[RMDB]
RNA sequence: GGGAACGACUCGAGUAGAGUCGAAAACAGCGUUUAUGGCUUCAGCUACUAAUGCAAACUACGCUUUUGCGUACUAAUUAGUUAUUAGUAGAAACGUUCAUUAACAUAAUUACUAUUGGUUGGUUUUUGGGCUUAUUUUACAAUAGUUUUAAAUUUAACUCAAAAGUCAGUUCGCUGACUUUUGAGUAAAAGAAACAACAACAACAAC
Reactivity to 2A3 in 0.01 (KOAc 150mM, MgCl2 10mM, bicine 150mM(pH8.5), 24C), signal-to-noise 1, nucleotides 027 to 156: c020a000g080c010g040u050u110u080a070u070g000g000c010u080u130c130a010g040c000u000a000c000u000a000a000u000g000c020a000a060a130c060u040a040c020g080c000u170u080u220u300g070c000g010u000a050c000u110a080a130u070u010a050g010u060u280a010u000u000a010g000u000a000g000a020a060a010c020g010u050u080c000a000u000u060a010a010c000a020u110a080a050u230u050a060c000u050a010u070u030g100g070u040u010g050g060u000u020u010u120u030g020g010g000c040u110u040a130u120u210u040u040a050c010a000a090u010a080g010u090u040u050u090a000a030a030u040u040u000a040
Chemical mapping of a 207-nucleotide RNA with 2A3. The RNA was probed in 150 mM KOAc, 10 mM MgCl2 and 150 mM bicine (pH 8.5) at 24 C. For 2A3 the reverse transcriptase was SuperScript II with manganese.